[RMDB]
RNA sequence: GGGAACGACUCGAGUAGAGUCGAAAAUGGGGGUGCCGAGGCAGGAGAAUUUUGUGAACCUAGGAGGCGGAGCUUGCAGUGAGCCGAGAUCACGCCACUGCACUCUAGCCUGGGCGACAGAGUGAGACAAUAAAAUUGGUUUCGACCAAUUUUAUUGAAAAGAAACAACAACAACAAC
Reactivity to 2A3 in 0.01 (KOAc 150mM, MgCl2 10mM, bicine 150mM(pH8.5), 24C), signal-to-noise 4, nucleotides 027 to 126: u070g010g000g000g010g000u020g010c030c020g020a020g020g030c020a010g040g040a040g020a050a070u100u130u110u130g080u050g040a060a040c010c020u030a100g030g070a010g030g070c030g000g000a000g020c110u100u070g000c020a010g000u010g030a060g030c060c030g100a110g030a130u200c060a010c090g000c000c000a000c000u000g000c000a000c010u010c000u010a050g000c000c010u010g020g030g000c020g010a010c010a020g060a020g050u070g030a050g010a030
Reactivity to DMS in 0.01 (KOAc 150mM, MgCl2 10mM, bicine 150mM(pH8.5), 24C), signal-to-noise 9, nucleotides 027 to 126: u010g010g000g010g010g020u000g010c060c050g010a080g000g020c070a050g000g010a070g010a090a060u000u000u000u010g010u010g010a090a110c040c030u000a090g010g000a070g010g010c060g000g000a020g010c150u010u000g000c010a010g010u000g000a100g030c020c060g000a130g010a090u010c210a110c160g000c010c010a010c010u010g000c000a020c020u000c010u000a060g020c000c010u000g000g010g020c060g010a070c060a040g000a060g010u000g000a100g000a160
The record gives the reactivity of an RNA of 177 nucleotides to 2A3 and DMS. Reactivities are given for positions 27 through 126. As a SHAPE reagent, 2A3 marks flexible, mostly unpaired nucleotides at the ribose 2'-OH. DMS adducts were read by reverse transcription with MarathonRT. The 2A3 profile rests on 7,432 reads. The data come from the RNA Mapping Database (RMDB), library OK2TRN.